[RMDB]
Conditions: 150 mM KOAc, 10 mM MgCl2 and 150 mM bicine (pH 8.5), 24 C. Structure probing data (DMS and 2A3) for a 207-nucleotide construct. For 2A3 the reverse transcriptase was SuperScript II with manganese. It was measured as part of the RMDB library OK3TST. For DMS the reverse transcriptase was MarathonRT.

RNA sequence: GGGAACGACUCGAGUAGAGUCGAAAAUUUUAUGGAAACUAGAUUUUCAACUUUGCCAUCCAUCUGGCUUACAAAACUUGAAAUGCUCCAGAUGUGACUUUGUAUCUUAAUUCCUUUUCACCAACCAGAAGGUGGUGCUGUCGUGCUGGCAACCAAAGACUCACCUAAUAUUCGUAUUAGGUGAGUCAAAAGAAACAACAACAACAAC
Reactivity to DMS in 0.01 (KOAc 150mM, MgCl2 10mM, bicine 150mM(pH8.5), 24C), signal-to-noise 1, nucleotides 027 to 156: u000u000u000u000a080u040g010g030a140a080a190c050u000a120g000a230u000u010u000u020c010a060a100c040u000u000u010g030c050c030a100u000c080c020a040u030c040u000g010g010c250u030u000a080c030a090a060a030a130c080u000u010g010a070a140a200u010g010c040u000c010c000a040g010a050u000g010u010g010a020c040u000u010u000g040u010a010u000c050u000u040a100a120u000u010c010c020u000u000u000u000c010a060c030c020a100a110c060c040a170g020a090a090g000g060u010g010g020u000g020c010u000g010u000c030g010u010g040c020u000g040g020c070a040a260c040c050a020a060a280
Reactivity to 2A3 in 0.01 (KOAc 150mM, MgCl2 10mM, bicine 150mM(pH8.5), 24C), signal-to-noise 2, nucleotides 027 to 156: u050u040u030u040a130u090g000g020a010a030a000c030u000a040g010a160u070u110u120u180c070a050a060c110u160u110u120g040c040c000a040u030c010c000a010u000c010u010g070g000c010u010u120a090c060a110a150a220a130c060u110u140g080a090a120a040u120g070c110u060c010c000a000g000a020u010g060u070g050a050c010u050u080u170g070u020a030u070c020u020u090a070a060u090u020c040c000u050u040u100u030c050a050c050c010a100a140c010c010a020g060a240a050g050g020u030g010g000u030g030c040u070g010u050c030g040u050g040c040u050g030g010c050a030a020c040c010a050a020a070

The 2A3 profile rests on 1,146 reads.